[RMDB]
RNA sequence: GGGAACGACUCGAGUAGAGUCGAAAAGUGCGUAAUAGCUCACUGGUCGAGUGACUCUGCGCCGAAAAUGUACCGGGGCUAAACGUAUCACCGAAGCUAUGGAUUCGCACCGUUGGUGCGAGUGGUACAGACAUGUCUCCUUCGGGAGACAUGUCUGAAAAGAAACAACAACAACAAC
Reactivity to DMS in 0.01 (KOAc 150mM, MgCl2 10mM, bicine 150mM(pH8.5), 24C), signal-to-noise 2, nucleotides 027 to 126: g070u000g020c040g000u000a080a110u000a090g010c050u000c020a050c060u010g020g020u010c170g020a060g000u000g010a060c040u030c110u010g000c020g020c050c020g000a010a050a080a070u000g030u000a030c040c000g010g000g000g000c120u000a010a160a130c070g010u000a020u000c050a120c060c030g020a100a060g000c090u000a080u010g030g030a100u000u000c020g020c020a000c000c010g010u010u000g070g030u000g000c010g000a020g010u020g010g000u000a140
Reactivity to 2A3 in 0.01 (KOAc 150mM, MgCl2 10mM, bicine 150mM(pH8.5), 24C), signal-to-noise 2, nucleotides 027 to 126: g050u050g000c000g010u010a070a070u020a240g070c010u060c040a100c140u110g080g070u090c060g050a020g090u070g090a060c030u000c100u180g050c090g000c000c000g030a150a060a040a080u150g020u010a050c010c000g030g070g000g000c010u020a070a000a070c040g040u070a020u280c060a070c100c000g020a060a010g000c010u060a070u290g080g040a070u090u000c000g030c020a000c000c020g300u210u290g070g010u000g000c010g000a020g000u070g050g000u080a030
Background
Conditions: 150 mM KOAc, 10 mM MgCl2 and 150 mM bicine (pH 8.5), 24 C. Structure probing data (DMS and 2A3) for a 177-nucleotide construct. For DMS, 1,321 sequencing reads were counted. Source: RMDB library OK2TRN, as collected in RNAgym.